The record gives the reactivity of an RNA of 207 nucleotides to DMS and 2A3.
RNA sequence: GGGAACGACUCGAGUAGAGUCGAAAACACCUUCUAGGAUUCGUCCUAGAAGGUGAUAAAGAUAUGGAUGUAUUUGACAUGUGAGAUCGGAAACGAUCUACAACAGCAAAUGACAUCCUAAGUCAGGUGGAGAUCAGCCAUUCGUGGCUGAUCUCAAACGUUUCUCUUGAUUCGUCAAGAGAAACGUAAAAGAAACAACAACAACAAC
Reactivity to DMS in 0.01 (KOAc 150mM, MgCl2 10mM, bicine 150mM(pH8.5), 24C), signal-to-noise 2, nucleotides 027 to 156: c010a000c000c000u000u000c010u000a000g010g010a060u000u000c300g030u000c010c000u000a010g010a010a020g000g020u000g010a000u000a010a080a160g010a190u000a210u010g010g000a010u010g040u010a050u000u000u000g000a100c070a300u000g010u000g000a040g020a020u000c000g020g010a180a110a250c020g020a020u000c000u000a050c040a140a150c040a100g020c010a030a050a030u000g000a030c000a040u000c040c000u000a020a070g000u000c030a170g020g010u000g020g010a030g010a030u000c010a050g000c000c000a070u000u000c270g010u000g000g000c020u010g000a000u000c000u000c000a000a110
Reactivity to 2A3 in 0.01 (KOAc 150mM, MgCl2 10mM, bicine 150mM(pH8.5), 24C), signal-to-noise 2, nucleotides 027 to 156: c000a000c000c000u000u000c000u000a000g010g000a000u040u040c170g050u060c130c000u010a010g000a000a000g000g000u010g000a000u040a000a130a010g010a020u040a040u120g000g000a000u000g020u000a060u000u010u010g170a170c220a260u050g010u030g040a010g010a000u000c000g020g010a070a050a020c010g000a000u000c000u020a030c030a060a030c000a010g050c000a000a000a000u020g020a030c020a000u010c000c000u000a080a020g010u020c080a050g110g160u170g100g020a010g000a010u000c000a020g010c000c000a030u070u120c290g100u050g000g030c010u000g000a000u000c000u000c010a010a010

Overview: For DMS the reverse transcriptase was MarathonRT. For 2A3 the reverse transcriptase was SuperScript II with manganese.